Source: RMDB library OK1LIB, as collected in RNAgym. Structure probing data (2A3 and DMS) for a 177-nucleotide construct. The 2A3 profile rests on 20,812 reads.
RNA sequence: GGGAACGACUCGAGUAGAGUCGAAAAGAGCGUUGGCGUAUAUCGCACUUCUGGCCAUGUCCUCGUUGUGGCUUAUUAGCGAAAUAUCGGCCGGUACCGAUUGUCGGAAUGCUAAUAUAUACGGAAAGGGUAAAUCUUACUUCGGUAGGAUUUACCCAAAAGAAACAACAACAACAAC
Reactivity to 2A3 in 0.01 (KOAc 150mM, MgCl2 10mM, bicine 150mM(pH8.5), 24C), signal-to-noise 9, nucleotides 027 to 126: g090a010g020c060g010u030u040g050g010c020g010u030a050u020a020u170c050g020c050a070c070u060u020c030u050g030g000c010c010a060u090g050u080c020c030u040c040g040u030u080g050u040g080g000c030u060u060a040u060u110a070g030c030g050a090a020a030u160a030u050c010g010g010c030c030g020g030u070a060c020c010g020a040u010u050g080u060c030g010g050a040a020u090g000c000u010a020a030u060a070u010a010u020a080c050g040g050a090a060a080
Reactivity to DMS in 0.01 (KOAc 150mM, MgCl2 10mM, bicine 150mM(pH8.5), 24C), signal-to-noise 9, nucleotides 027 to 126: g010a090g020c090g010u000u000g000g010c050g010u010a050u020a040u020c090g010c040a080c100u010u010c040u000g010g000c020c050a060u020g010u020c030c020u000c120g010u010u010g010u000g010g000c080u010u010a030u010u010a030g010c010g010a090a090a090u030a040u010c040g010g000c050c060g010g010u020a160c030c000g000a080u020u020g010u010c090g010g010a080a080u010g000c010u000a030a030u010a050u020a070u020a060c070g010g010a090a090a120